Source: RMDB library TTRDEL, as collected in RNAgym. The record gives the reactivity of an RNA of 177 nucleotides to DMS. The DMS profile rests on 1,462 reads. DMS adducts were read by reverse transcription with MarathonRT.
RNA sequence: GGGAACGACUCGAGUAGAGUCGAAAAGAUAUGGAUCCCUGCCAACAGCUACCGGGUCGGAAACGACCCGUAGACAUGGCACCAUCCUAAGUCAAAAGGGUAAGGGUGGUUCGCCACCCUUACCCAAGCAAUCACAAUUGUUCGCAAUUGUGAUUGCAAAAGAAACAACAACAACAAC
Reactivity to DMS in 0.01 (KOAc 150mM, MgCl2 10mM, bicine 150mM(pH8.5), 24C), signal-to-noise 2, nucleotides 027 to 126: g000a030u010a170u000g000g000a040u000c020c050c060u000g020c000c000a060a090c300a180g000c010u000a010c060c100g020g000g020u010c000g010g000a080a080a170c010g020a010c000c000c000g030u000a000g010a060c190a120u000g000g010c000a020c060c060a070u000c000c000u000a080a160g030u000c040a100a110a120a140g030g000g020u000a000a010g000g020g040u000g000g020u000u020c170g040c010c030a000c010c000c010u000u000a000c000c000c010a000a010